An RNA of 177 nucleotides, treated with DMS and 2A3 and read out base by base.
DMS adducts were read by reverse transcription with MarathonRT.
The data come from the RNA Mapping Database (RMDB), library M2PK90.
[RMDB]
RNA sequence: GGGAACGACUCGAGUAGAGUCGAAAAAGAACUAGCGAUUGUAAAAGGCUGUUUGCGCUUAGAUAUGGAAUUAGCGCAAAUAGGUCCGAAUUCCUUGAUAACAUUUCGGACAACCGCGCUAAAACAACGUUUAUUUUGCUUUCGAGCAAAAUAAACGAAAAGAAACAACAACAACAAC
Reactivity to DMS in 0.01 (KOAc 150mM, MgCl2 10mM, bicine 150mM(pH8.5), 24C), signal-to-noise 1, nucleotides 027 to 126: a050g000a080a100c210u000a040g020c000g000a090u000u010g030u010a030a150a170a120g000g010c040u010g000u000u000u000g010c010g030c010u000u000a070g010a170u000a110u010g000g000a040a210u020u000a000g040c030g060c000a000a010a040u000a000g010g000u000c000c000g010a030a040u000u000c070c060u000u030g010a120u000a120a100c110a080u000u000u000c000g000g000a030c000a100a030c050c030g000c010g010c120u000a020a060a030a070c100a060a060
Reactivity to 2A3 in 0.01 (KOAc 150mM, MgCl2 10mM, bicine 150mM(pH8.5), 24C), signal-to-noise 1, nucleotides 027 to 126: a010g020a000a020c040u010a000g000c000g040a040u080u270g100u210a130a150a000a050g050g040c010u010g000u050u000u000g000c040g000c040u020u020a020g030a120u150a170u300g080g080a070a090u140u020a020g010c030g030c000a010a000a000u000a000g000g020u000c000c020g000a000a010u040u010c050c040u010u090g040a040u070a180a000c010a080u010u060u050c010g000g010a010c000a000a020c050c020g140c010g030c000u000a040a080a050a080c010a010a000

Background
Values cover nucleotides 27 to 126. For DMS, 897 sequencing reads were counted. For 2A3 the reverse transcriptase was SuperScript II with manganese.